About this RNA:
An RNA of 207 nucleotides, treated with 2A3 and read out base by base. 2A3 adducts were read by reverse transcription with SuperScript II with manganese. Reactivities are rounded to 0.1 and cut off at 0 and 3.
[RMDB]
RNA sequence: GGGAACGACUCGAGUAGAGUCGAAAAAAGCCUGCGCGUAGGUCCGGGUCUCACCGUACUAAACGGACAAUUGCAAGCAGUUCAACCUCCAGCAACAACCUACAAGGAGCCUCUCUUAGAAACUGAGAACUCUGUUUCUCUUAAAGUAGGUGCCGGCUCAUUAGUACGGCUUCGGCCGUACUAAUGAAAAAGAAACAACAACAACAAC
Reactivity to 2A3 in 0.01 (KOAc 150mM, MgCl2 10mM, bicine 150mM(pH8.5), 24C), signal-to-noise 1, nucleotides 027 to 156: a000a000g050c020c000u030g010c040g010c000g030u010a000g010g150u030c070c030g000g060g050u040c010u040c130a060c000c000g080u120a030c020u180a090a300a160c040g000g010a060c040a060a100u100u100g070c050a070a030g030c070a040g000u110u110c010a120a100c040c000u000c000c040a000g000c010a000a070c000a020a060c040c000u000a030c010a000a000g020g000a000g000c100c000u050c000u020c010u070u050a100g210a200a290a110c060u090g030a000g000a050a040c040u030c020u090g130u090u170u010c050u010c000u000u110a140a170a030g000u030a090g030g000u000g020c050c010g030g000c000